[RMDB]
RNA sequence: GGGAACGACUCGAGUAGAGUCGAAAAACGAGAUCGUGUACGUACGAGUUCGUGAGUGUUCGAACGAUCUCGUGUGAACGUGAGUGAUCGUGUUCUCUCGAGUUCACUCACGAGAUCACACUCUCGUGAGUUCUCGAUCACACUCGAGUGUACACGAAUGUGCAGGAUAGUUCGCUAUCCUGCACAUAAAAGAAACAACAACAACAAC
Reactivity to DMS in 0.01 (KOAc 150mM, MgCl2 10mM, bicine 150mM(pH8.5), 24C), signal-to-noise 2, nucleotides 027 to 156: a070c010g010a050g000a040u040c020g020u000g030u010a060c040g020u010a100c020g000a210g040u000u000c050g010u000g000a110g010u000g020u000u010c070g030a090a090c030g030a020u000c010u000c020g060u000g000u000g010a060a090c070g000u010g000a060g020u000g020a100u000c050g050u000g000u000u000c040u000c050u000c000g000a040g000u000u000c060a130c020u000c010a010c020g000a030g000a120u000c100a160c250a130c250u000c000u010c030g000u020g010a110g040u000u010c090u000c080g000a110u010c040a110c100a030c010u000c000g010a280g030u000g000u010a010c030a060c010g030a040
Reactivity to 2A3 in 0.01 (KOAc 150mM, MgCl2 10mM, bicine 150mM(pH8.5), 24C), signal-to-noise 5, nucleotides 027 to 156: a000c090g030a030g010a080u020c000g010u040g030u080a050c040g020u040a030c020g030a070g100u100u240c110g030u130g060a070g040u190g060u050u080c050g010a030a010c040g000a030u010c010u010c020g010u010g020u020g010a050a040c070g040u030g050a060g020u100g040a070u020c000g000u000g030u080u010c070u000c010u010c010g000a010g000u030u040c030a010c010u000c010a010c000g000a000g000a020u180c140a040c010a010c180u000c000u000c000g000u000g000a000g010u060u050c050u030c030g060a090u060c010a010c000a000c020u010c000g010a040g030u060g000u010a000c010a000c000g000a020
The data come from the RNA Mapping Database (RMDB), library OK3TST.
Structure probing data (DMS and 2A3) for a 207-nucleotide construct.
For DMS, 4,773 sequencing reads were counted.